[RMDB]
RNA sequence: GGGAACGACUCGAGUAGAGUCGAAAAGAUAUGGAUCUGUGUGUGGAGCUACAUUCGGAAACGAAUGUUAGCGUUGAAACACCAGAUCCUAAGUCAAAACAGGGGUGAACUUCGGUUCACCCCUGAAGACCUAAAGGGAGUUCGCUCCCUUUAGGUCAAAAGAAACAACAACAACAAC
Reactivity to DMS in 0.01 (KOAc 150mM, MgCl2 10mM, bicine 150mM(pH8.5), 24C), signal-to-noise 2, nucleotides 027 to 126: g000a020u000a180u000g010g000a000u000c010u010g000u030g020u000g000u000g030g020a210g020c000u010a020c010a000u010u000c040g020g010a050a040a080c000g000a040a000u000g000u040u010a010g020c000g000u020u000g020a130a220a020c010a020c010c000a000g000a010u000c000c010u010a000a100g010u000c020a100a090a120a220c020a000g000g000g010g000u000g010a010a020c010u010u010c260g010g000u000u000c000a000c000c000c000c020u000g000a000a080